[RMDB]
RNA sequence: GGGAACGACUCGAGUAGAGUCGAAAACACGCGUGCUACACUGAUGAGUAGAAUGGGUUAAUACUGCAUUUAUUGCUUUCCCUUGACCGAGAGGUCUGGGUAAUCCUUUAAUACUCAUCGUGCUGGGGACAGUGAAUGACUUCGGUCAUUCACUGUCAAAAGAAACAACAACAACAAC
Reactivity to DMS in 0.01 (KOAc 150mM, MgCl2 10mM, bicine 150mM(pH8.5), 24C), signal-to-noise 1, nucleotides 027 to 126: c030a100c180g000c140g040u020g000c070u040a090c000a020c020u020g030a020u000g010a000g040u010a010g020a110a130u000g000g000g010u010u000a080a080u010a090c160u000g000c000a040u000u010u000a110u010u000g000c010u000u010u000c220c000c010u010u000g010a010c000c000g010a190g000a220g000g000u000c000u000g000g000g010u010a030a010u000c000c020u000u000u000a070a170u000a000c000u000c000a000u000c000g000u000g010c070u000g000g000g000
Reactivity to 2A3 in 0.01 (KOAc 150mM, MgCl2 10mM, bicine 150mM(pH8.5), 24C), signal-to-noise 2, nucleotides 027 to 126: c080a020c010g140c020g130u140g100c020u060a020c050a010c050u220g000a000u000g000a010g000u000a010g030a070a050u050g000g010g020u010u030a060a060u090a180c050u020g030c020a020u100u090u140a210u300u090g000c000u040u060u100c000c010c000u030u120g000a010c000c000g020a030g010a010g090g000u000c010u010g000g000g000u000a000a000u000c000c000u040u050u060a060a060u010a020c010u000c010a000u000c000g000u000g000c080u030g030g000g060
Structure probing data (DMS and 2A3) for a 177-nucleotide construct. The 2A3 profile rests on 1,947 reads. The RNA was probed in 150 mM KOAc, 10 mM MgCl2 and 150 mM bicine (pH 8.5) at 24 C. DMS adducts were read by reverse transcription with MarathonRT.